[RMDB]
RNA sequence: GGGAACGACUCGAGUAGAGUCGAAAAAGUUAGGUUCGCUAUGGUGCAACUCUUUAAGGCAAUAACGAACUAAUUCUAAGCAAGAAAUGGAGAAAUGCCAGGGUCACUAUCUAGCCAUAAUAGUGCUGUAAGUGACUUAGAUUCGUCUAAGUCACAAUCAAAAAGUCACUUUCGAGUGACUUUUUGAAAAAGAAACAACAACAACAAC
Reactivity to 2A3 in 0.01 (KOAc 150mM, MgCl2 10mM, bicine 150mM(pH8.5), 24C), signal-to-noise 2, nucleotides 027 to 156: a000g060u080u040a090g030g080u030u000c030g000c040u040a030u100g030g070u060g080c080a150a260c090u060c100u100u290u130a060a040g020g010c020a040a050u070a090a080c080g030a020a040c030u020a000a020u070u010c010u050a070a060g110c060a090a000g040a060a060a050u080g060g000a070g080a100a090a090u020g010c020c020a070g000g020g020u050c000a000c030u030a090u090c020u050a010g010c020c000a020u110a190a020u040a040g070u100g040c060u050g080u120a200a030g010u000g010a000c010u000u000a010g000a010u020u060c110g010u010c190u000a000a000g020u000c010a000c000a010a030
Reactivity to DMS in 0.01 (KOAc 150mM, MgCl2 10mM, bicine 150mM(pH8.5), 24C), signal-to-noise 2, nucleotides 027 to 156: a050g000u000u000a040g040g010u000u010c050g010c020u000a040u000g050g010u020g010c020a130a090c140u000c120u000u000u000a120a130g000g040c030a120a040u010a030a050c040g020a020a120c010u000a010a080u000u000c030u000a080a150g030c100a110a070g000a030a100a070u000g030g000a060g000a070a120a040u000g010c080c060a110g000g010g000u000c020a060c050u000a020u000c060u010a090g000c050c050a070u020a040a090u000a060g020u010g000c010u010g010u000a120a160g020u000g000a020c000u010u000a000g000a060u010u000c300g020u010c000u000a010a020g020u000c000a020c010a030a090